RNA sequence: GGGAACGACUCGAGUAGAGUCGAAAAAGAGGCACAUCAUUGGGCGCAUGUUCGCCAUCGAGCAGCAGCCAGUCAUAUCCGGCUCCGGCACAGAUUUCGACCGUAUAGGGAUUGGCGAGCGCCUGCAUACCUCCAUAGCGUUCGCGCUAUGGAGGUAAAAAGAAACAACAACAACAAC
Reactivity to 2A3 in 0.01 (KOAc 150mM, MgCl2 10mM, bicine 150mM(pH8.5), 24C), signal-to-noise 1, nucleotides 027 to 126: a030g110a060g070g070c050a040c000a180u090c000a020u150u300g050g010g000c020g030c010a040u080g030u130u070c030g000c120c000a110u280c060g030a060g000c050a010g030c010a000g000c000c000a000g030u030c010a010u020a000u060c000c000g000g070c050u080c070c010g000g000c050a050c080a150g080a100u040u040u040c050g020a080c000c000g000u050a010u100a080g200g010g010a030u010u000g010g020c010g000a010g000c030g010c000c030u000g020c000a030
Reactivity to DMS in 0.01 (KOAc 150mM, MgCl2 10mM, bicine 150mM(pH8.5), 24C), signal-to-noise 2, nucleotides 027 to 126: a070g000a080g000g000c040a100c110a120u000c120a150u020u010g010g000g030c000g040c040a220u000g030u000u000c040g030c110c220a090u000c070g000a080g000c010a030g000c140a230g010c020c000a020g030u000c060a040u000a070u000c000c000g000g030c020u010c100c010g000g000c140a150c200a110g000a130u000u000u000c010g020a250c010c010g010u020a040u000a020g010g010g020a050u000u000g020g010c010g020a170g020c030g020c000c000u000g000c200a160
An RNA of 177 nucleotides, treated with 2A3 and DMS and read out base by base. The reactions ran in a buffer of 150 mM KOAc, 10 mM MgCl2 and 150 mM bicine (pH 8.5), at 24 C. In probing experiments dimethyl sulfate is read out at A N1 and C N3, which are open when not base-paired. For 2A3 the reverse transcriptase was SuperScript II with manganese.